[RMDB]
RNA sequence: GGGAACGACUCGAGUAGAGUCGAAAAUAAUGCGAAAUCAAGCAGUUAGCGGGCUGUGGAUUGCAGCUUGGCCGGCAAAUGGAAUCAGAUCUGGCGACAUUAUUCAGAAGCUGUUCCCUCAGUAAAUAUGGGUUUAAAGUUUCGACUUUAAACCCAUAAAAGAAACAACAACAACAAC
Reactivity to 2A3 in 0.01 (KOAc 150mM, MgCl2 10mM, bicine 150mM(pH8.5), 24C), signal-to-noise 3, nucleotides 027 to 126: u170a000a070u070g000c030g040a030a090a090u160c040a070a050g000c010a020g090u070u100a020g020c010g010g030g010c010u000g060u050g120g110a140u120u190g010c010a000g010c000u020u050g150g000c020c020g100g000c040a030a040a080u120g060g010a060a080u160c060a020g050a060u000c020u020g040g000c000g000a030c000a020u000u150a090u130u080c050a080g060a140a010g030c010u070g030u030u050c030c000c000u080c080a040g030u120a000a070a080u080
Reactivity to DMS in 0.01 (KOAc 150mM, MgCl2 10mM, bicine 150mM(pH8.5), 24C), signal-to-noise 2, nucleotides 027 to 126: u050a060a040u000g020c010g020a150a090a160u030c030a120a110g020c020a060g010u010u030a090g010c090g000g000g020c010u010g010u000g010g010a050u030u040g000c030a020g020c070u000u020g000g030c000c020g050g020c090a030a050a090u000g010g000a050a160u020c160a060g000a090u010c080u010g000g020c060g000a070c030a020u040u000a050u010u000c060a090g000a050a070g010c050u010g020u000u000c000c000c030u000c100a070g030u000a040a120a070u020
Chemical mapping of a 177-nucleotide RNA with 2A3 and DMS.
As a SHAPE reagent, 2A3 marks flexible, mostly unpaired nucleotides at the ribose 2'-OH.
Conditions: 150 mM KOAc, 10 mM MgCl2 and 150 mM bicine (pH 8.5), 24 C.
The data come from the RNA Mapping Database (RMDB), libraries RFM100 and RFMREP.
For DMS the reverse transcriptase was MarathonRT.